[RMDB]
Structure probing data (2A3 and DMS) for a 177-nucleotide construct. Conditions: 150 mM KOAc, 10 mM MgCl2 and 150 mM bicine (pH 8.5), 24 C. The DMS profile rests on 2,466 reads. It was measured as part of the RMDB library M2PK50. 2A3 is a SHAPE reagent: it acylates the 2'-hydroxyl of flexible nucleotides of all four kinds.

RNA sequence: GGGAACGACUCGAGUAGAGUCGAAAAGAACCAGGCUUCGGCCUGGUUCAUAAUAACGCGGGCGUGGGACACUGCCGGAGCUGGCCUCGGAUAGUCUCAGUAUAAUCUUAGCCUUCGGGCUAAGAAAGCAAAUAGCUAGAUUCGUCUAGCUAUUUGCAAAAGAAACAACAACAACAAC
Reactivity to 2A3 in 0.01 (KOAc 150mM, MgCl2 10mM, bicine 150mM(pH8.5), 24C), signal-to-noise 2, nucleotides 027 to 126: g000a010a020c010c010a010g030g030c010u070u150c200g030g030c030c000u010g000g000u000u000c010a000u000a040a010u030a010a000c070g030c030g050g030g000c060g020u040g000g000g040a030c020a000c110u090g030c020c020g020g000a010g000c030u070g050g030c000c020u030c020g010g000a020u030a070g040u000c020u000c080a030g030u090a100u060a290a120u000c010u010u010a010g000c000c000u010u070c240g070g010g000c010u000a010a000g010a010a000a000
Reactivity to DMS in 0.01 (KOAc 150mM, MgCl2 10mM, bicine 150mM(pH8.5), 24C), signal-to-noise 3, nucleotides 027 to 126: g000a010a010c000c000a030g000g000c010u000u000c210g040g020c000c010u000g000g000u010u010c010a010u000a040a040u010a150a120c120g030c060g010g000g000c060g020u000g020g000g020a080c060a070c090u010g010c020c020g000g010a080g020c040u010g010g000c080c040u020c050g030g000a120u000a060g010u000c020u010c040a090g010u010a070u000a080a160u000c000u000u000a000g010c000c000u000u010c160g020g010g020c000u000a000a010g000a010a070a090